Structure probing data (DMS and 2A3) for a 177-nucleotide construct.
RNA sequence: GGGAACGACUCGAGUAGAGUCGAAAAUAACGGACCCUUCCCUGAUCCUGGGUGGGCCAUGCUGGGGGUGGGGGUGCUCAGGAUGGGCUGCCGCAGGGGCUCUGGGUUUUAACGUGCCUGAGGCAGCGAACGACCAUAUAUUCGUAUAUGGUCGUUCAAAAGAAACAACAACAACAAC
Reactivity to DMS in 0.01 (KOAc 150mM, MgCl2 10mM, bicine 150mM(pH8.5), 24C), signal-to-noise 3, nucleotides 027 to 126: u020a100a140c130g000g010a110c000c020c010u010u000c030c000c000u000g010a070u010c040c040u000g000g020g020u010g020g000g040c090c070a060u010g010c080u010g010g000g010g030g040u010g020g040g010g040g010u000g000c050u020c060a070g010g010a080u000g010g010g020c030u000g010c020c020g010c050a060g000g000g000g000c080u010c080u010g000g010g000u000u000u010u000a060a110c140g010u000g000c010c020u000g000a070g010g000c020a020g020c100
Reactivity to 2A3 in 0.01 (KOAc 150mM, MgCl2 10mM, bicine 150mM(pH8.5), 24C), signal-to-noise 3, nucleotides 027 to 126: u090a020a020c040g040g060a050c030c010c000u010u020c020c000c000u040g030a090u040c010c010u020g080g070g060u230g060g060g000c020c010a130u160g020c080u100g040g090g020g030g120u270g070g040g020g010g060u090g030c010u020c030a020g030g050a050u030g050g050g000c000u010g010c010c000g030c020a000g040g000g020g000c050u070c120u150g060g020g010u080u100u020u140a050a010c010g030u040g050c000c010u060g000a040g050g000c010a000g020c000

For DMS, 2,956 sequencing reads were counted. The RNA was probed in 150 mM KOAc, 10 mM MgCl2 and 150 mM bicine (pH 8.5) at 24 C.